[RMDB]
RNA sequence: GGGAACGACUCGAGUAGAGUCGAAAACGUAAGUACUCGGAUAGAAAUCUAUCCGGAUGUAGAUUACUUGCUCGCAUCCGUAGCCGAGCUUGGGUACGACGAAAUAAAAUUGCUUGAGCCUUUAGUACCUCGAGAUAACGUUCGCGUUAUCUCGAGGAAAAGAAACAACAACAACAAC
Reactivity to 2A3 in 0.01 (KOAc 150mM, MgCl2 10mM, bicine 150mM(pH8.5), 24C), signal-to-noise 3, nucleotides 027 to 126: c050g090u030a020a140g020u020a050c000u000c000g020g000a000u060a080g140a030a300a100u190c000u000a030u000c030c000g010g010a030u080g060u100a140g010a080u050u140a050c020u050u170g040c010u040c050g040c000a030u070c010c030g040u020a030g060c040c160g040a030g000c000u030u050g110g020g000u070a010c010g010a000c030g080a080a040a070u300a030a080a020a060u090u090g030c040u070u080g040a030g040c000c050u190u110u030a030g050u070a100
Reactivity to DMS in 0.01 (KOAc 150mM, MgCl2 10mM, bicine 150mM(pH8.5), 24C), signal-to-noise 1, nucleotides 027 to 126: c130g000u040a060a020g010u000a030c060u000c000g000g000a020u000a140g000a150a230a300u060c000u030a010u030c000c000g000g000a090u070g000u040a040g000a010u030u100a000c160u000u000g000c140u000c000g070c140a090u000c000c030g000u090a100g060c040c070g040a040g000c000u000u000g060g000g000u000a050c040g000a040c000g000a080a040a200u090a000a060a030a190u000u000g000c080u000u000g040a140g050c070c090u000u010u000a110g050u000a110

The data come from the RNA Mapping Database (RMDB), library OK1LIB. This 177-nucleotide RNA was probed chemically with 2A3 and DMS. For 2A3 the reverse transcriptase was SuperScript II with manganese. The reactions ran in a buffer of 150 mM KOAc, 10 mM MgCl2 and 150 mM bicine (pH 8.5), at 24 C. DMS adducts were read by reverse transcription with MarathonRT.